[RMDB]
RNA sequence: GGGAACGACUCGAGUAGAGUCGAAAAUAGACGUAUUCGUACGUCUAAAAAAACCUUUGUGCGUCGUUGUGCUAGAGUAAAGUGUGCCCAUUGGGCACACUUACUCUUGGACCACAACGAGCGCACUCUGGUAAAAAUCGUUGGUUCGCCAACGAAACAUGAGAUAGGAAUUCGUUCCUAUCUCAUGAAAAGAAACAACAACAACAAC
Reactivity to 2A3 in 0.01 (KOAc 150mM, MgCl2 10mM, bicine 150mM(pH8.5), 24C), signal-to-noise 7, nucleotides 027 to 156: u110a000g000a000c000g010u000a020u030u110c210g020u030a020c000g000u000c000u020a040a010a000a000a000a020a030c010c000u010u000u010g000u010g010c010g000u020c000g000u010u000g000u000g020c020u010a000g010a000g010u030a040a140a050g000u020g000u010g010c050c020c110a300u260u300g010g000g000c000a000c000a000c000u000u000a000c000u000c000u000u050g000g040a040c090c010a000c000a000a000c000g000a070g050c000g000c000a000c000u000c000u000g000g010u090a100a080a020a010a070u050c010g000u010u000g030g030u050u070c240g040c100c000a000a010c000g000a050a020a000
Reactivity to DMS in 0.01 (KOAc 150mM, MgCl2 10mM, bicine 150mM(pH8.5), 24C), signal-to-noise 3, nucleotides 027 to 156: u000a010g000a020c010g010u010a020u000u010c300g030u000a010c010g010u000c000u000a000a000a040a100a030a050a020c010c010u000u000u000g020u000g010c010g030u000c000g010u000u010g000u010g010c020u000a020g020a030g010u000a020a020a070g020u000g040u000g020c000c000c010a300u000u000g050g030g030c010a000c000a000c010u000u000a000c010u000c010u000u010g020g010a090c130c010a010c010a000a010c000g000a060g050c020g030c010a010c000u000c030u000g010g030u020a030a070a100a090a100u000c020g010u000u000g000g010u000u000c300g030c020c000a020a020c020g000a040a060a160